Notes:
This 207-nucleotide RNA was probed chemically with DMS and 2A3. For DMS the reverse transcriptase was MarathonRT. The RNA was probed in 150 mM KOAc, 10 mM MgCl2 and 150 mM bicine (pH 8.5) at 24 C. For 2A3 the reverse transcriptase was SuperScript II with manganese.
[RMDB]
RNA sequence: GGGAACGACUCGAGUAGAGUCGAAAAGAAUCACUGACAACGCUCACACCAACAGCAUUCAUCUGGAUCACCACGUGCAUGGUCAUGUUGUUUAUCUUCAUGGUCUAUUUGUACAUCAAAUUCCGCGGAUAUUUUGGCAACUACGCAAGCGCAAUCAGUACCAUGAACAGUUCGCUGUUCAUGGUACAAAAGAAACAACAACAACAAC
Reactivity to DMS in 0.01 (KOAc 150mM, MgCl2 10mM, bicine 150mM(pH8.5), 24C), signal-to-noise 2, nucleotides 027 to 156: g000a100a170u000c060a160c030u010g020a120c070a050a110c050g000c080u020c120a100c130a080c020c020a090a100c070a130g010c060a080u000u000c040a050u000c030u010g030g000a070u020c070a110c060c050a100c100g050u000g050c040a150u010g020g060u000c000a120u030g020u000u000g020u010u000u010a120u010c040u000u020c050a080u000g030g030u000c020u000a120u020u000u010g020u000a070c060a130u000c060a000a060a120u000u000c020c040g050c050g000g000a070u000a070u000u000u000u000g050g020c030a080a100c060u000a070c020g000c000a090a090g040c020g000c000a070a070u040c060a150
Reactivity to 2A3 in 0.01 (KOAc 150mM, MgCl2 10mM, bicine 150mM(pH8.5), 24C), signal-to-noise 7, nucleotides 027 to 156: g070a020a040u150c070a020c100u050g050a030c050a120a030c100g010c020u040c030a070c010a040c050c040a050a060c020a070g060c030a050u070u100c020a070u050c030u030g020g020a030u050c040a010c090c020a080c100g020u010g010c010a040u060g020g000u020c010a020u010g010u010u020g070u060u230u140a140u110c020u020u010c010a010u030g020g000u000c030u070a110u060u120u050g010u030a020c010a040u120c080a040a080a130u130u040c030c010g020c040g060g000a020u030a110u120u110u060u020g050g010c010a080a050c050u110a030c060g000c050a060a020g020c040g030c080a020a050u090c010a040